[RMDB]
RNA sequence: GGGAACGACUCGAGUAGAGUCGAAAAGAGCACGUCCUGCUGCUCUGGGCUCUCCUGGGACCCAGGUGCACCCCAUCCUGGACCAAUGACAGGCACCCCAUCCUAGCCCCAGACAUCUCACAGGCACUGUCUGAUUUAAAUUCGUUUAAAUCAGACAAAAAGAAACAACAACAACAAC
Reactivity to 2A3 in 0.01 (KOAc 150mM, MgCl2 10mM, bicine 150mM(pH8.5), 24C), signal-to-noise 3, nucleotides 027 to 126: g040a010g000c010a010c070g110u130c040c050u050g040c060u010g000c010u000c020u020g020g020g000c020u000c010u010c070c040u030g030g000g100a130c030c000c000a020g020g030u050g010c030a130c000c030c010c010a040u070c010c000u010g020g010a020c020c020a050a110u160g040a030c020a030g040g000c030a080c020c000c000c020a040u070c020c010u040a070g010c000c000c010c000a020g020a040c020a060u040c070u000c020a070c000a040g060g000c020a020c070
Reactivity to DMS in 0.01 (KOAc 150mM, MgCl2 10mM, bicine 150mM(pH8.5), 24C), signal-to-noise 9, nucleotides 027 to 126: g010a050g010c030a040c090g000u000c060c050u010g020c110u000g020c020u000c010u010g000g010g000c050u000c050u000c050c080u000g010g010g010a120c110c010c010a030g000g010u000g010c080a300c020c010c010c030a190u000c020c020u000g010g010a140c050c040a070a080u000g000a130c090a050g000g010c140a110c050c020c020c030a080u000c030c030u000a110g010c040c010c010c030a070g000a060c080a050u000c040u000c050a070c080a070g010g010c110a090c190